[RMDB]
RNA sequence: GGGAACGACUCGAGUAGAGUCGAAAAUCCACUAUGAAUCUAGUCACUAAAUAAACACAAUUAGCUACUGUGUGCAAUAGUGAGUGUUGAUAACACAAAAUAAUAGUAUAGUUUUGGAAGAUUAUACGCGCCCUUGCUCCGUUCGCGGAGCAAGGAACGUUGGAUCUGUGUUCGCACAGAUCCAACGAAAAGAAACAACAACAACAAC
Reactivity to 2A3 in 0.01 (KOAc 150mM, MgCl2 10mM, bicine 150mM(pH8.5), 24C), signal-to-noise 1, nucleotides 027 to 156: u080c000c000a070c020u050a130u300g150a080a020u070c120u130a020g130u140c000a000c000u000a010a040a300u180a100a230a020c050a000c010a070a080u070u120a040g080c060u110a010c000u060g020u000g000u020g090c060a080a000u000a040g010u000g050a050g040u010g080u080u030g060a160u150a200a000c000a000c050a050a120a150a060u200a120a020u190a140g020u040a010u000a040g010u080u100u040u090g110g040a090a070g000a010u090u000a020u050a020c020g110c010g020c010c000c000u010u000g000c000u000c040c000g000u010u040c130g000c000g090g000a000g000c000a000a000g000g000a000a000
The record gives the reactivity of an RNA of 207 nucleotides to 2A3. Conditions: 150 mM KOAc, 10 mM MgCl2 and 150 mM bicine (pH 8.5), 24 C. For 2A3 the reverse transcriptase was SuperScript II with manganese.